[RMDB]
Structure probing data (2A3 and DMS) for a 207-nucleotide construct.
Source: RMDB library ARCHII, as collected in RNAgym.
The reactions ran in a buffer of 150 mM KOAc, 10 mM MgCl2 and 150 mM bicine (pH 8.5), at 24 C.
For 2A3 the reverse transcriptase was SuperScript II with manganese.
RNA sequence: GGGAACGACUCGAGUAGAGUCGAAAAGCUUGGUCGAAGUGUUUAGUACUCCCAAUAGUGCAUGUUCGGUGGUCUCGGGUUCGAGUCUCGCUUUCGAUCCCUCGAUCUGCCACGUCUGUUCGAAGAGUAGUCUUCGUGGCAACUGGCAGUUAAACCGCCUGUAUAGAUCGUUCGCGAUCUAUACAGGAAAAGAAACAACAACAACAAC
Reactivity to 2A3 in 0.01 (KOAc 150mM, MgCl2 10mM, bicine 150mM(pH8.5), 24C), signal-to-noise 4, nucleotides 027 to 156: g020c010u070u080g080g030u110c060g040a100a020g020u030g040u130u110u130a090g020u070a030c040u040c010c010c030a040a060u130a060g090u100g070c070a050u050g050u080u060c030g000g040u030g000g040u020c040u040c080g080g010g000u010u060c010g000a000g050u020c030u040c110g090c050u050u050u040c030g020a050u010c010c000c000u020c010g040a070u020c010u000g000c000c000a020c080g020u030c140u060g040u010u020c010g020a020a020g020a030g060u300a050g110u110c000u000u020c020g020u110g030g010c000a010a000c010u010g000g000c000a000g010u030u080a050a110a060c030c000g000
Reactivity to DMS in 0.01 (KOAc 150mM, MgCl2 10mM, bicine 150mM(pH8.5), 24C), signal-to-noise 2, nucleotides 027 to 156: g010c030u000u000g000g060u000c040g000a070a070g030u000g010u000u000u010a170g040u000a070c030u010c020c020c030a090a180u000a090g020u000g000c050a100u000g000u000u000c000g050g010u000g020g020u000c020u000c070g030g010g010u000u000c020g000a120g010u000c080u010c100g040c100u010u000u010c050g000a090u000c020c010c010u010c030g010a090u000c010u000g000c000c000a020c160g020u000c080u000g020u010u000c010g000a020a020g000a060g030u000a180g010u000c010u000u000c000g000u010g020g010c020a040a050c010u010g010g010c020a030g020u000u000a020a060a060c040c060g010